[RMDB]
RNA sequence: GGGAACGACUCGAGUAGAGUCGAAAACUCUUGUUAGGUGAAAGUUGAUGGUCGCCGUGUCAGUCCAUGCCUUUGAAAACAGUUCUAUGUAGUAGGGAGUCGAGAACCUAUGAGAUUUAGAACUUGCUAUGCCUUGGACUCUUCGGAGUCCAAGGAACCUUCGAUAAAGCUUCGGCUUUAUCGAAGGAAAAGAAACAACAACAACAAC
Reactivity to DMS in 0.01 (KOAc 150mM, MgCl2 10mM, bicine 150mM(pH8.5), 24C), signal-to-noise 2, nucleotides 027 to 156: c030u000c040u000u010g020u000u000a050g050g020u000g000a080a050a100g050u000u000g000a130u010g010g020u000c030g040c030c000g010u000g000u000c010a140g020u000c040c050a060u000g010c020c020u000u000u000g010a120a060a080a050c050a040g000u010u020c010u000a020u000g020u000a300g030u000a060g000g020g010a110g020u000c120g010a280g010a110a100c010c000u000a030u010g000a300g000a150u010u020u000a010g010a020a030c020u000u010g020c010u000a160u010g020c000c000u010u000g000g000a020c000u000c020u030u020c300g050g010a020g030u000c000c000a000a020g010g020a000a020
Reactivity to 2A3 in 0.01 (KOAc 150mM, MgCl2 10mM, bicine 150mM(pH8.5), 24C), signal-to-noise 1, nucleotides 027 to 156: c020u030c030u060u110g090u050u090a080g000g030u070g050a160a110a060g010u060u040g070a080u060g000g060u040c050g030c040c030g000u010g050u050c050a040g010u020c030c010a050u070g040c000c000u150u200u100g100a080a080a020a000c040a000g010u010u030c000u020a040u060g030u020a020g010u010a010g020g000g060a080g120u100c090g090a030g040a110a020c020c000u030a020u060g050a080g010a110u020u010u050a030g010a010a000c010u000u030g010c030u050a030u140g000c010c010u000u000g000g000a010c000u000c000u020u020c060g080g000a000g010u000c020c000a000a010g010g000a010a000